[RMDB]
Structure probing data (2A3 and DMS) for a 177-nucleotide construct. For DMS the reverse transcriptase was MarathonRT. The RNA was probed in 150 mM KOAc, 10 mM MgCl2 and 150 mM bicine (pH 8.5) at 24 C. Source: RMDB libraries RFM100 and RFMREP, as collected in RNAgym.
RNA sequence: GGGAACGACUCGAGUAGAGUCGAAAAGAGGAUACACUCGGUUCUUCUUCACGCCCCCACAGUUGGGGAUGCACUCUGAUUAGCUAAUUCAUAGAAUGGCUGGUCACUUCAAGGGUGUAUCGGAUUCGGUUUGCUACAUAUUCGUAUGUAGCAAACCAAAAGAAACAACAACAACAAC
Reactivity to 2A3 in 0.01 (KOAc 150mM, MgCl2 10mM, bicine 150mM(pH8.5), 24C), signal-to-noise 4, nucleotides 027 to 126: g050a010g040g010a040u070a110c070a040c060u120c080g020g000u050u030c020u060u020c030u070u130c060a060c100g060c020c010c000c010c010a060c040a150g110u170u100g020g000g020g010a010u060g000c020a000c030u080c050u090g000a000u000u000a000g000c000u080a260a110u070u000c000a190u110a200g030a030a000u010g010g000c010u000g000g010u010c000a020c080u210u190c080a120a120g010g010g000u000g010u000a010u010c020g000g080a100u080u060c030
Reactivity to DMS in 0.01 (KOAc 150mM, MgCl2 10mM, bicine 150mM(pH8.5), 24C), signal-to-noise 3, nucleotides 027 to 126: g000a130g000g010a030u030a060c050a130c130u020c140g000g030u010u000c040u000u000c030u030u000c100a070c190g020c070c000c000c040c060a100c180a140g000u020u010g010g000g000g020a010u010g000c010a050c030u010c040u020g000a030u010u020a000g030c000u010a030a030u000u010c000a240u000a140g000a010a030u000g000g000c000u010g010g020u000c010a090c210u030u030c280a150a050g000g000g010u000g000u010a000u000c000g000g020a160u000u010c120